[RMDB]
The data come from the RNA Mapping Database (RMDB), library M2RFPK. An RNA of 207 nucleotides, treated with DMS and 2A3 and read out base by base. For DMS, 3,703 sequencing reads were counted. The 2A3 profile rests on 4,403 reads. For DMS the reverse transcriptase was MarathonRT.
RNA sequence: GGGAACGACUCGAGUAGAGUCGAAAAGAAAGUUCAAACAAGCUAGCCGGCAAAAAAGCAAACUUGACCACCAAGGAUAAAAGAGAUCUUAUCCAAGGAUGCAAAAGAUAAUCUCACUUUUGACACCAAAACAGGGAGUAGUUCGCUACUCCCUGAACCAUUCCAUAAUGUUCGCAUUAUGGAAUGGAAAAGAAACAACAACAACAAC
Reactivity to DMS in 0.01 (KOAc 150mM, MgCl2 10mM, bicine 150mM(pH8.5), 24C), signal-to-noise 2, nucleotides 027 to 156: g000a100a090a060g010u000u000c010a080a180a200c040a020a050g050c010u000a300g030c030c020g030g010c000a000a050a070a130a150a070g030c030a040a100a060c020u000u000g010a170c070c050a130c030c000a070a300g010g010a050u000a010a010a030a060g000a200g000a130u000c020u000u000a020u020c000c000a030a240g020g030a130u000g000c020a030a030a040a000g000a070u000a030a090u010c040u000c030a130c000u000u000u000u000g000a130c040a120c010c040a020a060a060a160c020a000g010g000g000a030g030u000a000g020u000u010c260g030c000u000a030c010u000c000c000c000u000g010a020a050
Reactivity to 2A3 in 0.01 (KOAc 150mM, MgCl2 10mM, bicine 150mM(pH8.5), 24C), signal-to-noise 5, nucleotides 027 to 156: g040a020a040a010g030u060u080c060a050a050a060c010a090a020g010c010u050a010g020c040c040g060g000c110a050a060a030a030a010a010g040c050a080a050a010c030u060u060g050a070c030c030a020c020c020a060a030g010g000a010u020a030a040a030a010g130a010g000a030u030c010u040u030a020u010c010c010a030a030g040g010a040u040g000c020a030a040a000a010g010a030u090a120a130u110c040u030c050a040c020u030u020u030u030g100a100c040a040c090c080a050a060a060a110c000a010g000g000g000a000g000u000a000g020u030u040c110g000c050u000a000c000u010c000c000c000u000g010a000a000